[RMDB]
RNA sequence: GGGAACGACUCGAGUAGAGUCGAAAAUCUGCGAGUAGCCGAACGCAACGACCUUGUUGUCGAGGGCCAGUUGGUUGUUGACGGCGGUAUUCAGCAGCGCCACGCCUUCGGUGACGGACUGGUUGAAACGUCUCUCCGGAUUCGUCCGGAGAGACGUAAAAGAAACAACAACAACAAC
Reactivity to DMS in 0.01 (KOAc 150mM, MgCl2 10mM, bicine 150mM(pH8.5), 24C), signal-to-noise 1, nucleotides 027 to 126: u050c040u000g020c000g050a070g000u000a010g020c050c050g000a100a110c060g010c020a000a040c040g000a040c000c020u030u000g010u010u020g040u010c140g040a040g000g000g050c090c060a110g030u000u010g100g030u000u000g030u000u000g020a100c000g000g000c050g040g030u090a040u030u000c040a190g000c040a000g000c020g000c060c030a120c030g010c000c020u020u000c040g010g000u010g010a020c080g020g030a060c030u050g060g070u050u000g000a210a120
Reactivity to 2A3 in 0.01 (KOAc 150mM, MgCl2 10mM, bicine 150mM(pH8.5), 24C), signal-to-noise 1, nucleotides 027 to 126: u040c000u050g000c000g060a000g020u010a030g060c010c010g030a170a040c020g020c020a020a130c010g010a010c000c000u000u140g050u000u000g000u060c070g010a060g040g000g000c050c060a070g020u100u040g120g000u000u000g000u020u020g010a090c110g020g000c030g000g000u020a210u070u080c040a090g000c000a000g000c000g060c020c020a150c000g050c000c000u090u060c060g060g080u110g040a040c000g000g000a040c000u000g090g000u060u000g010a100a100
This 177-nucleotide RNA was probed chemically with DMS and 2A3. For 2A3, 749 sequencing reads were counted. For DMS, 1,264 sequencing reads were counted. Source: RMDB library OK1LIB, as collected in RNAgym. For DMS the reverse transcriptase was MarathonRT.